[RMDB]
Source: RMDB library VIROID, as collected in RNAgym. Structure probing data (DMS and 2A3) for a 207-nucleotide construct. The RNA was probed in 150 mM KOAc, 10 mM MgCl2 and 150 mM bicine (pH 8.5) at 24 C. High 2A3 reactivity points to a flexible backbone, as in loops and unpaired stretches. For DMS, 4,344 sequencing reads were counted.
RNA sequence: GGGAACGACUCGAGUAGAGUCGAAAAAAGGCAUGUGAGCUUCAACUCGAUGAAGAGCGUCAGCGGACGGCCUCUGAGACGAGCGAUGGACAGUAGAGCUCGUCUCUACCAGUCGCGUGCUGACUCUCACGCCCACCCGCACGGCUGCUCCGAGAGGCUAAUGGUUGUUGUUCGCAACAACCAUUAGAAAAGAAACAACAACAACAAC
Reactivity to DMS in 0.01 (KOAc 150mM, MgCl2 10mM, bicine 150mM(pH8.5), 24C), signal-to-noise 2, nucleotides 027 to 156: a120a030g020g050c050a040u020g020u000g020a070g030c050u000u000c050a110a100c070u000c000g030a260u000g010a210a130g000a010g020c040g040u010c040a130g000c010g020g020a100c060g030g010c000c030u000c030u000g020a130g010a050c040g000a030g000c000g040a220u020g010g010a140c100a150g020u000a020g000a300g020c040u000c100g020u000c000u000c000u000a010c000c010a120g030u000c010g000c050g000u000g000c110u000g030a090c100u000c030u000c030a060c050g000c000c010c020a150c050c010c050g000c040a090c050g020g030c000u000g020c010u000c040c050g010a100g010a090g000g020
Reactivity to 2A3 in 0.01 (KOAc 150mM, MgCl2 10mM, bicine 150mM(pH8.5), 24C), signal-to-noise 7, nucleotides 027 to 156: a000a000g100g010c080a090u210g050u050g060a050g020c030u070u050c040a150a160c030u040c070g190a190u120g060a050a040g020a020g030c040g010u010c010a010g000c010g040g060a090c020g010g010c020c020u040c060u030g000a010g000a000c000g000a020g050c010g040a060u130g080g050a040c050a060g110u150a020g000a000g040c030u060c160g070u040c050u010c000u000a010c010c010a010g020u010c010g000c030g060u120g030c060u000g010a010c010u000c000u000c020a010c070g010c000c010c000a060c010c020c000g020c020a060c050g040g030c040u140g030c000u070c020c020g020a020g010a020g050g070